[RMDB]
Record summary
Structure probing data (DMS) for a 177-nucleotide construct. The RNA was probed in 150 mM KOAc, 10 mM MgCl2 and 150 mM bicine (pH 8.5) at 24 C.
RNA sequence: GGGAACGACUCGAGUAGAGUCGAAAAAACUUGCGACCACAGAAGGUGAAUGGGCUGUUUUCACACUUUUGAUAUCUUCGACAAAUCUGGCUGGAAUUUUGACCCCUGUCCAAUCUUUGAGGAAGCCGCUUAAAAGGUUCUUCGGAACCUUUUAAGCAAAAGAAACAACAACAACAAC
Reactivity to DMS in 0.01 (KOAc 150mM, MgCl2 10mM, bicine 150mM(pH8.5), 24C), signal-to-noise 1, nucleotides 027 to 126: a080a040c060u010u000g000c060g030a180c030c010a140c140a050g000a040a050g010g020u010g000a080a010u000g000g010g010c040u010g010u000u000u000u000c040a040c070a060c030u000u000u010u020g010a090u000a050u000c010u010u000c040g000a080c110a030a040a120u010c070u000g010g000c080u010g000g000a110a130u010u000u000u000g000a180c120c030c010c050u000g030u000c030c010a050a080u000c070u010u000u000g010a160g020g000a120a100g030c140c070